This 177-nucleotide RNA was probed chemically with 2A3 and DMS.
RNA sequence: GGGAACGACUCGAGUAGAGUCGAAAAUCGUGACAAUUCGUUGUCACGAAACAUUAUGUGGUGAAAUAUAAAAGCCGAAAUCCCGAUACCAUAUAAUUUAAAGAAUGGAUAGUUUCGACUAUCCAAAGAUACGAAUCUCUUUCGAGAGAUUCGUAUCAAAAGAAACAACAACAACAAC
Reactivity to 2A3 in 0.01 (KOAc 150mM, MgCl2 10mM, bicine 150mM(pH8.5), 24C), signal-to-noise 1, nucleotides 027 to 126: u010c000g000u000g010a000c000a030a000u080u070c300g050u050u030g000u000c000a000c000g010a040a020a000c010a030u030u060a050u030g010u000g000g040u070g070a100a210a000u300a030u050a200a130a040a010g070c050c010g050a100a130a060u010c050c040c000g040a060u060a090c010c000a020u010a000u010a030a050u080u100u160a110a210a050g180a160a090u080g000g000a000u000a010g010u000u090u080c230g050a010c000u010a010u000c000c030a000a010a010
Reactivity to DMS in 0.01 (KOAc 150mM, MgCl2 10mM, bicine 150mM(pH8.5), 24C), signal-to-noise 1, nucleotides 027 to 126: u000c000g030u010g010a030c000a030a030u010u030c130g010u010u000g000u000c000a000c000g010a000a170a060c150a050u000u000a020u010g050u020g000g020u000g000a060a210a080u000a160u030a090a030a050a130g000c070c080g000a060a220a110u000c040c000c000g000a080u000a020c000c010a000u000a000u000a000a000u000u030u020a080a190a110g000a130a140u000g000g000a020u000a010g000u000u000u010c160g000a020c010u000a010u000c000c010a000a020a040
The reactions ran in a buffer of 150 mM KOAc, 10 mM MgCl2 and 150 mM bicine (pH 8.5), at 24 C. DMS (dimethyl sulfate) methylates the pairing face of unpaired adenines and cytosines.